This 207-nucleotide RNA was probed chemically with 2A3. Reactivities are given for positions 27 through 156. For 2A3 the reverse transcriptase was SuperScript II with manganese.
RNA sequence: GGGAACGACUCGAGUAGAGUCGAAAAACGCUUCACAAUGUGCGGCAAAGAAACAUUGUUUAUGCAAAGGCACUUCGCAAUGUGUGCUCAAGCAUUGCUUAUUCAAACACGCUUCACAAUGUGCGACAAAACUUCACGGUCUUCGGACCGUGAAGAACCGACCAAAUGUCUUCGGACAUUUGGUCGGAAAAGAAACAACAACAACAAC
Reactivity to 2A3 in 0.01 (KOAc 150mM, MgCl2 10mM, bicine 150mM(pH8.5), 24C), signal-to-noise 1, nucleotides 027 to 156: a000c030g000c040u060u060c010a000c000a030a130u040g000u000g000c080g060g010c060a100a120a000g100a030a040a000c030a020u010u000g000u100u140u050a020u030g040c030a090a030a000g050g000c000a020c030u110u230c100g010c170a150a120u170g000u000g010u000g040c030u080c100a010a030g030c000a030u020u020g000c000u020u170a100u180u080c000a030a040a000c070a000c170g120c100u090u160c040a030c040a210a190u160g000u000g050c030g060a000c120a010a060a010a040c000u000u000c000a000c010g000g010u020c020u000u080c060g070g000a000c000c000g000u000g000a010a000g000a000a000